[RMDB]
RNA sequence: GGGAACGACUCGAGUAGAGUCGAAAAUCCUCGUCAGAGUCACCACACAGUGACUGACCGUGGAGAAUAGUUCCACCUCUCGCCGCCACCCUGCGCACGGCAGACCUUACCGUCUGGCGUGGGUGGCCGCAAGAUGCAGGUUCGCCUGCAUCUUGCGAAAAGAAACAACAACAACAAC
Reactivity to DMS in 0.01 (KOAc 150mM, MgCl2 10mM, bicine 150mM(pH8.5), 24C), signal-to-noise 1, nucleotides 027 to 126: u000c000c010u000c120g060u010c130a050g000a130g010u000c010a010c010c050a090c280a210c300a080g000u000g000a010c000u000g000a030c050c020g000u000g020g000a000g000a040a220u000a170g000u010u000c020c010a010c030c050u000c000u010c000g020c120c200g010c000c000a000c010c010c120u010g090c040g000c030a040c100g020g010c010a010g000a060c010c060u000u030a090c300c290g000u000c020u010g020g000c000g020u010g010g000g030u000g020g000c000
Source: RMDB library VIROID, as collected in RNAgym. An RNA of 177 nucleotides, treated with DMS and read out base by base. The reactions ran in a buffer of 150 mM KOAc, 10 mM MgCl2 and 150 mM bicine (pH 8.5), at 24 C.